[RMDB]
RNA sequence: GGGAACGACUCGAGUAGAGUCGAAAACUGCCUCGUCGGCCCGGCAUGCCAACCUGAUCCGAAGUUCAAGGUGGUUUCUCUGGCCUUCCAGAGAGAUGCGCGUCGGAAGAACCGACGAACAAACCUUAAAACAAAACGACGUUCGCGUCGUUUUGAAGUAAGUAGGGAUCUUCGGAUCCCUACUUACAAAAGAAACAACAACAACAAC
Reactivity to 2A3 in 0.01 (KOAc 150mM, MgCl2 10mM, bicine 150mM(pH8.5), 24C), signal-to-noise 2, nucleotides 027 to 156: c020u070g060c030c050u020c000g020u000c000g000g000c020c000c030g020g000c020a050u110g030c050c000a090a110c010c000u000g000a010u050c000c030g050a080a000g040u050u040c030a050a020g000g000u020g010g010u020u110u000c000u000c000u000g040g020c060c010u150u210c050c000a000g000a000g010a000g010a060u140g080c060g010c060g030u030c000g000g010a030a020g020a110a040c000c010g020a000c000g010a030a000c010a020a050a050c010c020u220u300a030a140a000a100c010a000a010a000a000c000g000a010c000g000u020u070c180g000c000g110u000c000g010u000u000u000u000g000a010a000